The record gives the reactivity of an RNA of 177 nucleotides to 2A3 and DMS.
RNA sequence: GGGAACGACUCGAGUAGAGUCGAAAACGGUUCGUGAUGCGCCGAAUCGCCGCCGGAAUCGCAUUGCACGACACCCGCAUGCUGGUCGACCCGUUGCGCACUCAGUCACGCGCGGUGCUGAUGGGUGUAGCGAAAAAUUGUUCGCAAUUUUUCGCUAAAAAGAAACAACAACAACAAC
Reactivity to 2A3 in 0.01 (KOAc 150mM, MgCl2 10mM, bicine 150mM(pH8.5), 24C), signal-to-noise 1, nucleotides 027 to 126: c030g030g010u090u050c010g010u020g030a050u050g030c030g000c010c040g040a030a070u100c080g030c050c020g000c030c030g010g010a060a080u080c010g000c030a010u020u160g000c030a010c030g010a010c020a030c030c030c000g000c020a010u090g050c050u080g090g000u060c030g060a070c000c000c000g020u050u110g000c050g000c030a000c020u120c060a030g090u110c030a040c170g060c030g050c070g030g020u070g000c050u010g010a040u030g010g000g010u050g040
Reactivity to DMS in 0.01 (KOAc 150mM, MgCl2 10mM, bicine 150mM(pH8.5), 24C), signal-to-noise 2, nucleotides 027 to 126: c120g020g010u000u010c020g010u010g000a090u010g020c030g020c070c010g010a060a090u000c060g000c040c050g000c060c010g010g020a160a100u000c090g010c020a030u000u010g010c040a050c060g010a050c100a090c030c010c030g000c060a080u000g020c040u010g010g020u000c030g000a090c030c010c030g020u010u000g010c090g030c020a030c100u010c050a100g010u020c070a070c150g010c030g020c110g000g010u000g030c020u000g000a070u000g010g000g010u000g010

Values are in units of 0.01, from 0 to 300, in steps of 10.
2A3 adducts were read by reverse transcription with SuperScript II with manganese.